[RMDB]
RNA sequence: GGGAACGACUCGAGUAGAGUCGAAAAAGAGUUCGCUUCGGCGAACUCUACAACGGGAAAACGGCCUCCCGGAUAGAUAAGGCGGAUUCCGUCCAAGCGCCGAGAGUGGUGCGUUCGCGCACCACAAGUUUUAUCGUUACUUCGGUAACGAUAAAACAAAAGAAACAACAACAACAAC
Reactivity to 2A3 in 0.01 (KOAc 150mM, MgCl2 10mM, bicine 150mM(pH8.5), 24C), signal-to-noise 2, nucleotides 027 to 126: a000g000a000g000u010u010c000g010c040u030u070c180g010g010c000g010a000a000c000u000c000u010a010c000a020a020c000g030g000g000a060a090a000a050c000g000g000c000c000u000c000c030c010g020g000a150u170a060g140a030u140a200a120g010g020c060g050g110a300u300u090c040c010g020u000c030c040a010a010g080c100g040c150c010g010a000g030a000g010u020g010g000u020g030c030g010u010u070c260g000c000g000c040a000c020c000a000c000a000a000
Reactivity to DMS in 0.01 (KOAc 150mM, MgCl2 10mM, bicine 150mM(pH8.5), 24C), signal-to-noise 2, nucleotides 027 to 126: a060g000a040g000u000u010c010g010c020u000u020c150g030g020c000g030a020a010c000u000c000u000a040c110a110a150c030g020g000g000a000a040a140a100c020g010g020c010c010u000c020c000c010g000g000a120u000a100g000a170u020a050a120g000g000c030g000g030a280u000u000c010c000g030u010c030c080a150a040g010c110g000c000c000g000a300g020a200g050u000g000g010u000g010c000g030u000u000c200g000c030g000c000a020c000c000a000c010a020a050

Source: RMDB library M2PK50, as collected in RNAgym. This 177-nucleotide RNA was probed chemically with 2A3 and DMS. The DMS profile rests on 1,442 reads.